This 177-nucleotide RNA was probed chemically with 2A3 and DMS.

RNA sequence: GGGAACGACUCGAGUAGAGUCGAAAAGGGUGAGGCGGCCGUGUGCGCAGACAGUGCUCCAGCCGCGCGCGCGCCCCAGGCCCCGGCCCGGGCCUCGGUUCCAGAAGGGAGAGGAGCCCGCCAAGGCUCUCUCACCGAAAUUCGUUUCGGUGAGAGAAAAAGAAACAACAACAACAAC
Reactivity to 2A3 in 0.01 (KOAc 150mM, MgCl2 10mM, bicine 150mM(pH8.5), 24C), signal-to-noise 5, nucleotides 027 to 126: g020g010g010u030g010a060g020g030c130g030g010c080c020g030u040g010u020g020c010g010c020a020g060a140c060a080g170u100g150c070u060c040c020a060g070c090c000g000c000g000c000g000c000g000c020g000c000c000c000c000a020g080g060c000c000c000c000g030g010c000c000c010g000g010g000c000c000u040c030g020g030u060u030c020c010a060g130a190a180g110g030g010a070g020a050g050g010a050g030c000c020c010g040c040c030a040a030g030g000c000
Reactivity to DMS in 0.01 (KOAc 150mM, MgCl2 10mM, bicine 150mM(pH8.5), 24C), signal-to-noise 5, nucleotides 027 to 126: g000g010g020u000g000a300g000g000c160g010g010c040c040g010u000g000u000g020c000g010c020a110g010a060c230a140g020u010g000c030u010c020c040a200g000c030c020g010c010g010c010g000c010g010c080g000c000c000c010c030a050g010g000c020c010c010c030g010g000c020c000c030g010g020g010c010c010u000c070g000g000u010u010c030c040a150g010a150a110g000g010g010a100g000a150g000g000a090g000c000c020c150g030c110c080a100a110g000g000c050
Values are in units of 0.01, from 0 to 300, in steps of 10. It was measured as part of the RMDB library RFM100. 2A3 adducts were read by reverse transcription with SuperScript II with manganese. For DMS, 9,587 sequencing reads were counted.